RNA sequence: GGGAACGACUCGAGUAGAGUCGAAAAGAGGGGCUCCCAGAGGGAGGGACCCCAGCAAGCCGGUGCUGAGGGAGCUGCCUCUCUGAUGGACUUGCUGGCACCUGGCUUUGAGAACUGGACUGCCCUGCUUAUGACCAAAUUUCGAUUUGGUCAUAAGAAAAGAAACAACAACAACAAC
Reactivity to DMS in 0.01 (KOAc 150mM, MgCl2 10mM, bicine 150mM(pH8.5), 24C), signal-to-noise 7, nucleotides 027 to 126: g000a120g000g000g000g010c100u010c010c000c010a150g010a060g000g010g010a180g000g000g010a100c100c100c000c000a030g000c040a030a010g010c000c000g000g010u010g010c010u010g010a070g010g000g000a030g000c100u020g010c020c000u000c040u010c090u050g010a080u020g000g000a200c050u000u000g000c030u010g000g000c030a020c010c010u050g030g000c010u000u000u030g010a140g010a130a160c080u010g010g000a130c090u020g000c000c000c000u010g000
Reactivity to 2A3 in 0.01 (KOAc 150mM, MgCl2 10mM, bicine 150mM(pH8.5), 24C), signal-to-noise 9, nucleotides 027 to 126: g130a040g010g020g010g000c060u030c010c010c030a060g090a050g070g050g030a020g000g010g060a090c010c010c000c010a000g030c010a000a000g010c000c000g040g010u030g000c020u120g140a120g020g020g020a020g020c070u200g170c050c000u040c010u010c040u100g080a130u150g020g020a040c040u030u070g070c030u090g010g000c010a020c010c030u080g020g000c030u050u070u060g080a080g010a070a050c040u050g000g050a040c050u130g040c000c000c000u010g010
Structure probing data (DMS and 2A3) for a 177-nucleotide construct. Reactivities are given for positions 27 through 126. Conditions: 150 mM KOAc, 10 mM MgCl2 and 150 mM bicine (pH 8.5), 24 C. For 2A3, 17,340 sequencing reads were counted.